[RMDB]
RNA sequence: GGGAACGACUCGAGUAGAGUCGAAAAGAUAUGGACAUACGAGCUACAUUCGGAAACGAAUGAAUAGCGAUGAGUAUCGUCCUAAGUCAAAGGGAUUAGAUUAUUCUUCGGAAUAAUCUAAUCCCAACAUGUUACAUCCCUUCGGGGAUGUAACAUGAAAAGAAACAACAACAACAAC
Reactivity to DMS in 0.01 (KOAc 150mM, MgCl2 10mM, bicine 150mM(pH8.5), 24C), signal-to-noise 3, nucleotides 027 to 126: g020a050u000a300u010g000g010a020c000a000u000a000c010g000a160g040c000u000a030c010a010u000u000c000g020g000a160a080a170c000g000a010a030u000g000a130a110u000a000g010c040g000a130u010g010a240g000u000a000u000c200g010u000c010c010u000a040a100g010u000c070a070a140a120g000g010g000a010u000u000a010g000a020u000u000a010u000u000c000u000u020c290g010g000a010a000u000a000a000u000c000u000a000a000u000c000c000c000a010a020
Reactivity to 2A3 in 0.01 (KOAc 150mM, MgCl2 10mM, bicine 150mM(pH8.5), 24C), signal-to-noise 3, nucleotides 027 to 126: g040a030u080a060u150g000g000a000c010a020u010a010c040g040a020g010c000u020a000c010a000u000u000c000g030g000a110a070a020c010g010a000a030u040g110a250a140u030a030g030c020g100a130u250g050a030g000u010a020u050c120g000u030c000c010u010a250a020g110u060c080a150a080a100g000g000g000a010u000u000a000g000a000u010u010a010u020u000c030u040u100c290g040g000a000a000u010a000a000u000c000u000a000a000u000c000c000c000a000a000
This 177-nucleotide RNA was probed chemically with DMS and 2A3. Reactivities are given for positions 27 through 126. For DMS the reverse transcriptase was MarathonRT. The DMS profile rests on 3,133 reads. It was measured as part of the RMDB library TTRDEL.